[RMDB]
RNA sequence: GGGAACGACUCGAGUAGAGUCGAAAACAUCGAAUUCGAUCCGGAUUUCGGUGGACUAUCUCUCAAGGCACUCGUCACCGAGGCUGAUGAGGGUACUCCCCGGCGCCUGCUGGCGAUGGAGGAAUGUAGGUUGCUUCUGGCCCUCUGCAACCAGCCACCACUACUAGCAUUUCGAUGCUAGUAGUGGAAAAGAAACAACAACAACAAC
Reactivity to 2A3 in 0.01 (KOAc 150mM, MgCl2 10mM, bicine 150mM(pH8.5), 24C), signal-to-noise 2, nucleotides 027 to 156: c010a000u050c000g020a000a020u120u020c040g140a210u100c230c090g050g000a060u030u130u050c000g020g010u040g000g010a020c080u050a040u100c030u000c000u000c020a000a050g020g000c030a160c300u070c000g270u290c240a080c190c030g020a010g000g020c010u030g030a190u260g000a000g000g000g010u010a020c040u030c000c000c000c000g070g020c000g000c000c010u210g090c090u190g010g000c020g030a030u040g000g020a110g000g020a030a000u110g000u150a020g040g000u020u090g050c040u150u020c070u140g180g010c010c010c030u100c040u020g020c000a040a000c000c000a020g020c000c010a010